[RMDB]
Description
The record gives the reactivity of an RNA of 177 nucleotides to DMS and 2A3. The reactions ran in a buffer of 150 mM KOAc, 10 mM MgCl2 and 150 mM bicine (pH 8.5), at 24 C. For 2A3, 3,367 sequencing reads were counted.

RNA sequence: GGGAACGACUCGAGUAGAGUCGAAAAGACAGCAGCAGCAGCUCUGCUCACCGCGUGGAGUGCUUUCGCCACCAUCGAGGCCGGUAAGCAGGUCCCCGGCGAACCUUCCGAGAAGUCCAAGACGUGGAUCUUGCACUAGUUUCGACUAGUGCAAGAUAAAAGAAACAACAACAACAAC
Reactivity to DMS in 0.01 (KOAc 150mM, MgCl2 10mM, bicine 150mM(pH8.5), 24C), signal-to-noise 4, nucleotides 027 to 126: g010a110c090a060g000c030a060g010c050a110g000c080a110g010c070u000c010u000g000c010u000c060a120c040c030g000c100g040u010g000g000a090g030u010g010c100u000u000u000c070g020c010c010a120c080c070a100u020c110g010a130g000g020c080c040g010g000u010a070a110g010c040a030g000g000u000c020c020c020c080g010g020c040g010a070a060c070c020u000u000c010c030g000a130g010a070a130g010u000c030c030a050a110g010a110c120g010u010g010g010
Reactivity to 2A3 in 0.01 (KOAc 150mM, MgCl2 10mM, bicine 150mM(pH8.5), 24C), signal-to-noise 2, nucleotides 027 to 126: g110a020c060a030g030c000a020g000c000a000g000c030a010g020c070u010c020u090g010c010u030c040a050c010c030g030c050g020u090g020g050a040g030u070g020c000u040u100u090c040g000c030c000a060c030c020a100u120c080g030a120g020g060c050c020g000g050u060a030a020g040c030a000g000g030u030c000c020c010c020g000g010c000g010a030a050c000c000u020u000c030c020g050a060g020a110a010g010u010c020c010a040a040g090a050c040g070u050g030g020